An RNA of 177 nucleotides, treated with DMS and 2A3 and read out base by base. It was measured as part of the RMDB library RFM100. Reactivities are given for positions 27 through 126. High DMS reactivity at an A or C suggests that its Watson-Crick edge is free. Conditions: 150 mM KOAc, 10 mM MgCl2 and 150 mM bicine (pH 8.5), 24 C.
[RMDB]
RNA sequence: GGGAACGACUCGAGUAGAGUCGAAAAACGGUGGCCAUUACGAUGGCCACCGAACUUGGCGACUUGCAUGCCUGCCCGAUUCCGGGCCACGGCAUCACGCCCAUUGUGACGGCUUCAAGCGAUGUAACCUGAUCUCCGUAUUCGUACGGAGAUCAGGAAAAGAAACAACAACAACAAC
Reactivity to DMS in 0.01 (KOAc 150mM, MgCl2 10mM, bicine 150mM(pH8.5), 24C), signal-to-noise 1, nucleotides 027 to 126: a000c060g050g000u000g000g110c000c000a000u000u000a080c300g110a030u000g000g060c000c000a000c000c010g000a000a000c060u000u000g000g000c000g000a230c090u000u000g040c110a000u000g000c020c000u070g000c070c000c020g000a300u010u000c150c090g210g010g000c020c130a190c260g000g060c000a010u050c090a260c060g000c000c000c080a050u010u000g000u110g020a220c100g000g090c030u000u000c150a070a220g000c100g000a000u000g000u050a060a110
Reactivity to 2A3 in 0.01 (KOAc 150mM, MgCl2 10mM, bicine 150mM(pH8.5), 24C), signal-to-noise 2, nucleotides 027 to 126: a000c000g000g010u000g030g000c020c000a000u050u120a040c270g080a070u000g000g000c010c000a000c000c020g000a000a000c030u050u120g050g030c040g000a120c040u070u080g000c090a000u050g000c010c000u020g010c000c020c000g180a300u200u260c180c060g000g000g000c030c000a120c100g000g000c000a020u030c000a050c030g020c000c000c000a050u120u120g110u090g080a050c100g000g060c060u140u100c100a070a070g070c000g080a020u040g070u110a040a020